Notes
The record gives the reactivity of an RNA of 207 nucleotides to 2A3 and DMS. DMS (dimethyl sulfate) methylates the pairing face of unpaired adenines and cytosines. For 2A3 the reverse transcriptase was SuperScript II with manganese.
RNA sequence: GGGAACGACUCGAGUAGAGUCGAAAAUCGUAAGCUUCAAGCGCGUAGCAGUAGCUGCGUAGAACUCUCUCAUAGAGUCGCUUACCUCUGACCUGACUCCGUUAAGGACUCGGAGGUACCAACCCCAACGGAUGCCCUUAAUAGCUACCUCUGGUUGCUCUAGUACAACGUUCGCGUUGUACUAGAGAAAAGAAACAACAACAACAAC
Reactivity to 2A3 in 0.01 (KOAc 150mM, MgCl2 10mM, bicine 150mM(pH8.5), 24C), signal-to-noise 3, nucleotides 027 to 156: u120c030g000u080a100a060g000c020u080u080c150a180a130g010c070g020c150g190u240a030g000c050a070g020u110a020g010c000u000g000c000g020u000a030g070a100a010c000u000c010u030c000u000c020a090u100a240g010a000g000u000c010g000c020u010u080a040c000c000u000c020u020g010a010c000c000u000g020a050c020u020c070c060g030u060u070a090a040g010g000a040c100u020c080g000g010a010g020g000u020a040c000c040a020a070c020c010c010c030a020a020c020g030g000a040u070g000c010c000c020u090u070a090a110u070a180g020c020u040a090c010c020u030c020u050g080g000u000u070g010
Reactivity to DMS in 0.01 (KOAc 150mM, MgCl2 10mM, bicine 150mM(pH8.5), 24C), signal-to-noise 1, nucleotides 027 to 156: u000c040g030u000a040a120g030c000u000u020c070a120a040g050c040g000c090g020u020a100g000c010a230g010u000a080g040c000u000g040c040g060u000a160g030a080a130c000u000c020u060c040u000c070a220u000a300g010a070g020u000c020g000c020u000u030a060c020c010u000c040u000g020a100c010c010u000g000a140c070u000c030c020g030u000u010a130a100g020g020a090c050u020c030g020g030a070g000g010u010a030c060c110a060a140c000c000c000c000a040a130c080g010g000a100u000g030c020c000c030u000u010a030a070u010a050g000c020u020a090c010c020u010c050u010g080g010u000u000g000
Reactivities are given for positions 27 through 156. The reactions ran in a buffer of 150 mM KOAc, 10 mM MgCl2 and 150 mM bicine (pH 8.5), at 24 C.